Source: RMDB library PDB130, as collected in RNAgym.
This 207-nucleotide RNA was probed chemically with 2A3 and DMS.
For 2A3 the reverse transcriptase was SuperScript II with manganese.
RNA sequence: GGGAACGACUCGAGUAGAGUCGAAAAUUUGCCCAGAGCAGAGUCGGGAGAAGAGUGGAUCGACCGAAGAAAAGACCGUUUUUCGGAAGGGGAGCAGGUCCAACCGAUUUUUUUGCCAACUUGCACAGGAGGGAGCCAGAAGCGCACUCAAAGUUAGGAUUAUUUGUAGGUUCGCCUACAAAUAAUCAAAAGAAACAACAACAACAAC
Reactivity to 2A3 in 0.01 (KOAc 150mM, MgCl2 10mM, bicine 150mM(pH8.5), 24C), signal-to-noise 4, nucleotides 027 to 156: u090u090u120g040c010c000c000a030g030a010g030c050a010g020a010g070u040c040g010g040g030a070g030a150a030g080a030g060u070g010g030a040u040c050g040a030c020c000g030a020a020g030a040a090a020a010g090a050c020c030g060u040u030u030u020u100c030g010g000a070a030g050g010g000g010a040g050c060a030g020g000u010c010c030a030a030c020c010g010a010u090u030u000u010u020u090u100g010c010c010a060a040c070u040u090g030c060a030c020a090g020g030a030g020g030g020a020g010c010c010a020g030a100a010g010c050g010c060a030c020u060c060a110a040a030g070u140u110a070g060
Reactivity to DMS in 0.01 (KOAc 150mM, MgCl2 10mM, bicine 150mM(pH8.5), 24C), signal-to-noise 2, nucleotides 027 to 156: u000u000u010g010c000c030c000a130g010a090g010c090a060g030a080g030u010c010g020g000g010a130g010a060a050g030a120g050u000g010g010a020u000c020g000a100c000c020g000a130a180g000a050a090a040a120g010a100c100c080g020u000u000u000u010u000c020g010g030a200a160g010g000g030g000a140g050c040a150g030g010u000c000c020a050a070c040c030g010a000u030u000u000u010u000u000u000g000c020c030a030a100c040u000u020g000c030a050c070a080g000g020a060g040g020g010a060g000c030c020a060g010a040a080g000c040g000c030a050c020u000c020a100a100a110g000u010u000a130g030

For DMS, 2,845 sequencing reads were counted.